[RMDB]
Description
The record gives the reactivity of an RNA of 177 nucleotides to DMS and 2A3. Source: RMDB library OK1LIB, as collected in RNAgym.
RNA sequence: GGGAACGACUCGAGUAGAGUCGAAAAGGAGAUAUUAUUGCAACUGGUACACCAGCAGGCGUUGGUGCAGGUAUGCAACCACCUAAAUUUUUACAACCAGGUGAUGAAGUUAAAGUGACUAUUGAUAUCAUAAGAGGCAGUUCGCUGCCUCUUAUGAAAAAGAAACAACAACAACAAC
Reactivity to DMS in 0.01 (KOAc 150mM, MgCl2 10mM, bicine 150mM(pH8.5), 24C), signal-to-noise 3, nucleotides 027 to 126: g050g020a060g040a070u050a010u020u030a110u010u010g010c030a010a010c020u030g000g040u010a180c040a000c000c020a060g040c000a190g040g040c230g000u000u030g000g020u000g000c030a110g000g000u010a030u010g020c000a020a030c100c040a040c010c010u010a030a130a040u010u020u060u040u040a100c240a080a070c100c140a030g000g000u000g010a150u020g010a120a110g040u010u000a030a120a100g000u010g000a190c100u000a030u010u000g000a110u030a140
Reactivity to 2A3 in 0.01 (KOAc 150mM, MgCl2 10mM, bicine 150mM(pH8.5), 24C), signal-to-noise 3, nucleotides 027 to 126: g140g020a060g050a070u150a040u300u060a060u110u020g000c000a020a010c000u000g050g030u180a080c020a000c010c000a000g050c040a060g300g090c110g080u010u000g000g010u000g040c000a040g030g000u050a100u110g000c000a020a000c010c030a020c000c000u070a150a260a270u210u300u120u170u060a000c000a050a140c030c000a020g000g060u020g020a080u130g110a080a000g030u120u280a100a060a020g090u100g050a010c000u020a090u170u040g100a030u040a030